Chemical mapping of a 177-nucleotide RNA with 2A3. For 2A3 the reverse transcriptase was SuperScript II with manganese. Source: RMDB library OK1LIB, as collected in RNAgym. For 2A3, 989 sequencing reads were counted. Values cover nucleotides 27 to 126.

RNA sequence: GGGAACGACUCGAGUAGAGUCGAAAAUAUGGACGCGGUUGCUGGUGAAUACCCGUGUAUGGCGUUGCUGACACGGUCGAGCAGUGCGAUGUCGGGCGCUGUUUCAAGACCUAGCCUGCGCUAGAGAAGUCUCACGUGCUUUCGAGCAUGUGGGGCUAAAAGAAACAACAACAACAAC
Reactivity to 2A3 in 0.01 (KOAc 150mM, MgCl2 10mM, bicine 150mM(pH8.5), 24C), signal-to-noise 1, nucleotides 027 to 126: u300a090u060g000g030a050c030g010c030g040g020u150u150g040c020u000g000g030u040g040a060a050u040a150c000c000c030g000u010g020u020a240u050g030g020c130g130u050u240g000c020u020g020a020c030a010c020g030g000u000c020g000a010g000c020a020g020u030g050c020g140a210u270g180u300c130g030g000g000c000g000c000u000g020u000u300u080c070a100a050g040a130c000c010u000a000g000c000c060u130g000c050g000c000u070a020g000a010g100a300